[RMDB]
RNA sequence: GGGAACGACUCGAGUAGAGUCGAAAAACCGAAGAUAUGGAAUUGAAAAAUUGGUAGGGGAGCAUUCUAGUUGCACUGAAGGCGUAUGGCGAUGUAUGCUGGAGCGGCUAGAAAAGCAAAUGUAGGCCAUACGACUGGUUUUCGAACCAGUCGUAUGAAAAGAAACAACAACAACAAC
Reactivity to DMS in 0.01 (KOAc 150mM, MgCl2 10mM, bicine 150mM(pH8.5), 24C), signal-to-noise 6, nucleotides 027 to 126: a130c000c000g000a120a050g010a140u030a050u010g000g000a090a060u020u000g000a050a070a070a070a080u010u010g000g000u000a040g010g000g000g010a110g010c050a170u000u000c000u000a010g000u000u010g020c010a300c130u020g010a200a100g010g000c010g000u010a010u000g000g000c160g000a070u000g000u010a010u010g010c010u000g000g010a030g020c010g020g000c000u010a020g000a000a040a060a110g010c040a060a060a060u020g000u020a060g010g010c120
Reactivity to 2A3 in 0.01 (KOAc 150mM, MgCl2 10mM, bicine 150mM(pH8.5), 24C), signal-to-noise 4, nucleotides 027 to 126: a000c040c010g040a060a030g070a040u150a090u170g060g050a070a050u080u200g120a130a060a000a080a080u100u110g020g050u040a070g000g020g010g020a020g000c020a000u000u030c000u000a000g000u020u020g000c010a030c170u060g020a040a000g030g000c000g000u010a010u070g120g030c030g030a050u210g010u010a010u010g000c010u030g000g010a020g000c000g000g000c000u000a000g000a000a020a010a000g010c010a000a110a020u120g030u100a030g050g060c010

Structure probing data (DMS and 2A3) for a 177-nucleotide construct.
DMS (dimethyl sulfate) methylates the pairing face of unpaired adenines and cytosines.
The RNA was probed in 150 mM KOAc, 10 mM MgCl2 and 150 mM bicine (pH 8.5) at 24 C.
2A3 adducts were read by reverse transcription with SuperScript II with manganese.